[RMDB]
RNA sequence: GGGAACGACUCGAGUAGAGUCGAAAAAAGUAAAAGUCGUAACAAGGUUUCCGUAGGUGAAGGUUUGCCUACCAAAGCCCUUAGCCAGCGACUCUAAAGAAAUCAGCUAUCAGUCGCCCCUUCGGGGGCUGGCGACGCCAUCAAUCUGUGUCUGGGAACACAUAUUACUGUUCGCAGUAAUAUGUGUAAAAGAAACAACAACAACAAC
Reactivity to 2A3 in 0.01 (KOAc 150mM, MgCl2 10mM, bicine 150mM(pH8.5), 24C), signal-to-noise 2, nucleotides 027 to 156: a000a000g190u210a190a180a020a020g000u000c000g000u000a040a020c030a040a030g010g050u000u030u020c050c010g010u000a000g000g010u030g090a050a040g130g050u090u120u120g000c000c000u000a010c000c010a030a030a020g020c040c000c010u030u020a010g010c010c010a000g000c000g000a000c000u000c070u130a030a030a000g140a040a020a000u090c070a020g000c010u040a020u110c030a010g040u030c020g000c010c000c010c000u010u040c130g000g010g000g000g000c010u000g000g010c020g010a050c050g030c060c020a070u070c060a060a090u070c070u070g020u010g060u020c050u060g050g030g040a060
This 207-nucleotide RNA was probed chemically with 2A3. The data come from the RNA Mapping Database (RMDB), library ARCHII.